[RMDB]
RNA sequence: GGGAACGACUCGAGUAGAGUCGAAAAUCCAAAUUCGUUUGGAGACAUUCCUAAGUCGAGCGGCGAGAGGUUUAAGAGGUGGGUCGGAAACGACCCACUACCCACCUUAAACUACCCACCUCGCUCUCGAUAUGGAGAAAACACGGUUCGCCGUGAACUAUCCCAGAUUAUUCGUAAUCUGGGAUAGAAAAGAAACAACAACAACAAC
Reactivity to DMS in 0.01 (KOAc 150mM, MgCl2 10mM, bicine 150mM(pH8.5), 24C), signal-to-noise 2, nucleotides 027 to 156: u000c000c000a000a090a120u000u000c220g060u000u000u010g000g010a020g080a110c060a280u010u020c000c020u000a080a300g000u020c010g000a080g080c160g010g040c040g000a060g010a240g000g020u020u000u000a010a010g000a220g060g050u000g000g000g040u000c000g030g000a090a130a300c000g010a000c000c020c000a000c000u000a020c050c000c030a300c100c000u000u000a000a060a070c000u010a060c030c000c030a300c140c010u000c000g030c010u000c000u000c000g000a030u000a300u000g040g000a040g000a150a070a150a060c000a020c000g010g050u000u000c300g030c020c000g040u000g010a060a070
Reactivity to 2A3 in 0.01 (KOAc 150mM, MgCl2 10mM, bicine 150mM(pH8.5), 24C), signal-to-noise 2, nucleotides 027 to 156: u020c010c000a030a000a010u150u110c150g060u050u000u030g070g000a140g040a090c090a170u130u050c010c000u010a050a000g000u000c000g000a000g000c170g000g000c000g000a000g000a000g000g010u000u000u000a000a010g000a010g000g020u000g010g010g010u010c000g020g000a000a040a040c000g030a020c000c000c000a000c000u000a010c010c020c010a030c000c000u010u000a010a000a000c010u040a050c060c070c060a050c000c010u000c000g000c000u010c000u000c010g000a000u000a010u020g010g010a040g080a030a120a020a020c020a000c000g040g050u070u080c250g020c090c000g010u000g030a010a010